Chemical mapping of a 177-nucleotide RNA with DMS and 2A3. The 2A3 profile rests on 26,967 reads. DMS adducts were read by reverse transcription with MarathonRT.
RNA sequence: GGGAACGACUCGAGUAGAGUCGAAAAGAUAUGGAGCGAUUUAAGGGAGCUCCGGGUCGGAAACGACCUAGGAGCGACGAUCUUAUGUCGCUCCUAAGUCAAAGCUCAUUUGUUCGCAAAUGAGCAACAUUGUUUCUUAGUUCGCUAAGAAACAAUGAAAAGAAACAACAACAACAAC
Reactivity to DMS in 0.01 (KOAc 150mM, MgCl2 10mM, bicine 150mM(pH8.5), 24C), signal-to-noise 7, nucleotides 027 to 126: g010a050u000a300u010g000g000a010g020c000g010a040u000u000u000a020a020g010g000g010a090g020c000u000c000c010g000g000g010u000c000g020g000a120a100a180c010g010a010c000c000u000a050g060g000a010g010c000g010a060c280g010a050u010c040u000u000a020u000g010u000c000g010c010u000c000c000u000a000a040g000u000c040a120a140a140g010c000u000c000a000u010u000u000g010u000u010c280g010c010a010a010a010u000g000a010g010c000a050a050
Reactivity to 2A3 in 0.01 (KOAc 150mM, MgCl2 10mM, bicine 150mM(pH8.5), 24C), signal-to-noise 5, nucleotides 027 to 126: g030a010u070a040u180g000g000a010g000c000g000a010u020u020u060a050a030g040g020g030a050g020c010u000c000c000g000g000g000u000c010g000g020a110a040a050c020g000a000c010c060u080a300g000g010a000g020c000g060a060c050g010a020u030c010u000u030a020u040g020u000c000g010c000u010c000c000u000a010a000g000u010c030a070a100a030g000c000u000c000a010u000u000u020g080u090u150c300g020c200a010a010a010u000g000a000g010c000a000a000